[RMDB]
RNA sequence: GGGAACGACUCGAGUAGAGUCGAAAAAGGGGCUGGGCAUGGUAGCUCACACCUGUAAUCCCACCACACUCAGCUGAGUUUUGAAGUUCUGUUUUUUGUAGAGAUGGGGUCUCACUGUCUUGUCCAGGCUGCUGAGGCAGGAGGAUCACUUGAGCCACAUAGGUAAUGAUUUCGAUCAUUACCUAUGAAAAGAAACAACAACAACAAC
Reactivity to 2A3 in 0.01 (KOAc 150mM, MgCl2 10mM, bicine 150mM(pH8.5), 24C), signal-to-noise 3, nucleotides 027 to 156: a000g070g030g010g010c150u040g030g000g000c040a040u170g140g070u140a070g020c020u030c000a020c020a030c010c000u020g040u050a050a080u030c000c000c000a010c000c010a040c000a010c010u040c000a050g040c090u120g040a030g090u100u070u140u130g120a120a040g050u140u000c040u050g110u040u040u000u020u130u040g080u080a040g010a000g000a050u030g000g010g010g010u010c020u010c030a020c010u010g000u030c010u040u070g030u020c040c000a010g060g000c030u060g020c010u030g030a040g030g020c000a010g000g030a030g000g040a030u040c030a010c100u050u100g050a010g030c010c060a020
Reactivity to DMS in 0.01 (KOAc 150mM, MgCl2 10mM, bicine 150mM(pH8.5), 24C), signal-to-noise 3, nucleotides 027 to 156: a010g000g010g010g010c120u000g010g020g070c020a090u010g030g020u010a170g030c030u000c020a040c030a060c000c000u000g010u030a180a150u000c030c000c000a160c080c020a070c050a070c030u010c040a120g020c050u000g010a090g020u000u000u000u010g000a080a180g020u000u000c030u010g010u010u010u000u000u000u000g020u000a110g000a110g000a130u000g010g010g010g020u010c040u000c040a130c020u000g010u000c020u020u000g000u000c060c040a130g010g000c040u000g020c050u010g010a100g030g020c030a040g020g020a130g010g000a060u000c050a060c040u000u000g020a120g030c020c030a200
Annotation: The record gives the reactivity of an RNA of 207 nucleotides to 2A3 and DMS.